The record gives the reactivity of an RNA of 177 nucleotides to DMS and 2A3.
The DMS profile rests on 10,361 reads.
2A3 adducts were read by reverse transcription with SuperScript II with manganese.
DMS adducts were read by reverse transcription with MarathonRT.
Reactivities are given for positions 27 through 126.
The RNA was probed in 150 mM KOAc, 10 mM MgCl2 and 150 mM bicine (pH 8.5) at 24 C.
Source: RMDB library OK2TST, as collected in RNAgym.
RNA sequence: GGGAACGACUCGAGUAGAGUCGAAAAGGAUAUCUACGGAAGAAAGAAAUCAUGGUAUCUGGAUGAACCUGAAAUACAGUUUGAUUUACCUAUGGCAGCAAUGUACUUUUCUGGUGGCUCUGGGGUACUACGUAAAUCCAUUCGUGGAUUUACGUAGAAAAGAAACAACAACAACAAC
Reactivity to DMS in 0.01 (KOAc 150mM, MgCl2 10mM, bicine 150mM(pH8.5), 24C), signal-to-noise 7, nucleotides 027 to 126: g010g010a040u000a030u000c020u000a120c120g010g010a100a060g010a120a110a120g010a100a090a060u000c050a060u000g000g010u000a020u000c030u000g000g000a180u010g010a080a090c030c020u000g000a050a060a090u010a070c070a050g000u000u000u000g000a060u000u000u000a070c060c040u000a060u000g010g020c050a060g010c050a050a060u000g010u000a050c110u000u010u000u010c040u000g000g010u000g010g000c040u010c030u010g010g010g000g010u010a160
Reactivity to 2A3 in 0.01 (KOAc 150mM, MgCl2 10mM, bicine 150mM(pH8.5), 24C), signal-to-noise 5, nucleotides 027 to 126: g020g000a020u040a030u060c030u090a050c120g080g070a050a040g060a080a240a040g110a020a130a020u090c040a020u050g000g000u030a020u000c020u030g030g060a090u080g040a060a060c010c010u030g060a040a050a020u120a020c020a030g030u030u080u080g110a100u060u040u060a040c000c020u050a080u100g030g000c010a020g000c020a060a060u100g020u100a090c040u040u090u080u030c070u070g050g020u020g020g000c010u000c020u030g030g000g000g000u020a060